[RMDB]
Structure probing data (2A3) for a 177-nucleotide construct. For 2A3, 627 sequencing reads were counted. The RNA was probed in 150 mM KOAc, 10 mM MgCl2 and 150 mM bicine (pH 8.5) at 24 C. It was measured as part of the RMDB library OK1LIB.

RNA sequence: GGGAACGACUCGAGUAGAGUCGAAAAGCUGUGGUGCCGCUGGUGUCUCGGCUACGCCCAGCUGAUGCGGGGGGAGCUGGCCGCGGCCGCCGCCCAAUUCGGCGAGGUGGUGGACGAGGCCGAGGCGACGGCCAUUACGCUUCGGCGUAAUGGCCGUAAAAGAAACAACAACAACAAC
Reactivity to 2A3 in 0.01 (KOAc 150mM, MgCl2 10mM, bicine 150mM(pH8.5), 24C), signal-to-noise 1, nucleotides 027 to 126: g010c010u050g110u190g080g040u090g020c000c000g000c080u080g000g050u250g040u170c000u020c000g070g010c000u000a030c000g000c000c000c000a010g020c000u000g010a000u050g060c030g020g020g010g000g000g020a030g050c100u050g140g000c000c000g010c110g110g010c020c010g000c020c000g080c030c000c000a040a040u060u020c000g030g020c010g010a030g040g000u220g100g050u030g010g010a010c020g000a000g020g020c000c000g010a050g000g000c020g000